Structure probing data (2A3 and DMS) for a 177-nucleotide construct. The 2A3 profile rests on 624 reads. DMS adducts were read by reverse transcription with MarathonRT.
RNA sequence: GGGAACGACUCGAGUAGAGUCGAAAACGAACAAAGAUAUUCCAGCACCAGAUGUAUUUACAAACUCACAAAUUAUGGCUUGGAUGAUGGAUGAAUAUAGUGCAUUAGAUAAAUUUAAUUCACCAGGUCAGGUUUGACAGUUCGCUGUCAAACCUGAAAAAGAAACAACAACAACAAC
Reactivity to 2A3 in 0.01 (KOAc 150mM, MgCl2 10mM, bicine 150mM(pH8.5), 24C), signal-to-noise 2, nucleotides 027 to 126: c060g080a060a010c030a000a030a010g230a130u100a090u210u000c030c020a000g000c000a030c040c130a000g020a090u040g090u000a020u000u130u160a130c040a080a060a030c080u070c110a020c030a030a070a100u270u190a100u230g040g000c060u090u040g000g030a030u000g000a000u040g000g000a040u030g170a140a060u250a000u030a040g060u030g050c020a000u040u110a040g050a140u130a220a070a060u090u100u000a000a010u130u000c050a050c050c080a000g000g000
Reactivity to DMS in 0.01 (KOAc 150mM, MgCl2 10mM, bicine 150mM(pH8.5), 24C), signal-to-noise 1, nucleotides 027 to 126: c030g000a130a300c190a180a110a030g040a010u010a300u060u000c020c070a090g000c010a060c060c060a040g000a290u080g000u000a070u020u000u000a000c110a010a000a040c080u030c090a020c210a000a110a000u010u010a030u000g030g000c000u040u000g000g000a040u000g000a040u000g060g060a030u000g030a000a190u040a030u030a130g000u000g000c190a020u000u000a010g030a000u060a040a040a080u000u040u000a030a070u000u000c000a020c070c050a040g000g020
Reactivities are given for positions 27 through 126.